[RMDB]
An RNA of 177 nucleotides, treated with 2A3 and DMS and read out base by base.
RNA sequence: GGGAACGACUCGAGUAGAGUCGAAAAGAUAUGGAUCGUUGCUUUUGACGAUCAAACAUUCGGAAACGAAUGGUAGAUCGAUAAGCACCGAUCCUAAGUCAAACGGCACUUGUUCGCAAGUGCCGAAGCAUACCAGUACCUUCGGGUACUGGUAUGCAAAAGAAACAACAACAACAAC
Reactivity to 2A3 in 0.01 (KOAc 150mM, MgCl2 10mM, bicine 150mM(pH8.5), 24C), signal-to-noise 2, nucleotides 027 to 126: g010a010u080a020u100g020g010a000u010c000g020u010u020g050c000u120u130u060u230g300a200c100g000a000u020c040a040a220a010c000a010u010u020c020g010g060a030a040a050c010g000a000a030u010g000g090u080a030g000a010u000c050g090a120u020a080a010g000c000a000c010c000g000a000u020c000c010u000a040a030g010u000c010a160a000a100c010g010g020c000a010c000u000u020g040u160u190c270g010c160a000a000g010u000g000c020c010g000a000a000
Reactivity to DMS in 0.01 (KOAc 150mM, MgCl2 10mM, bicine 150mM(pH8.5), 24C), signal-to-noise 1, nucleotides 027 to 126: g050a010u000a300u000g020g010a000u000c000g020u000u000g020c010u000u000u000u000g030a190c100g010a010u000c010a000a110a300c000a010u000u000c000g000g000a080a060a180c000g020a020a010u000g000g050u010a220g000a010u000c010g040a070u010a010a020g000c000a000c080c000g000a010u000c000c000u000a030a060g000u000c020a180a140a190c020g000g040c020a000c010u000u000g000u000u030c180g020c040a020a000g000u000g000c000c000g000a000a020

For 2A3, 3,133 sequencing reads were counted. The RNA was probed in 150 mM KOAc, 10 mM MgCl2 and 150 mM bicine (pH 8.5) at 24 C.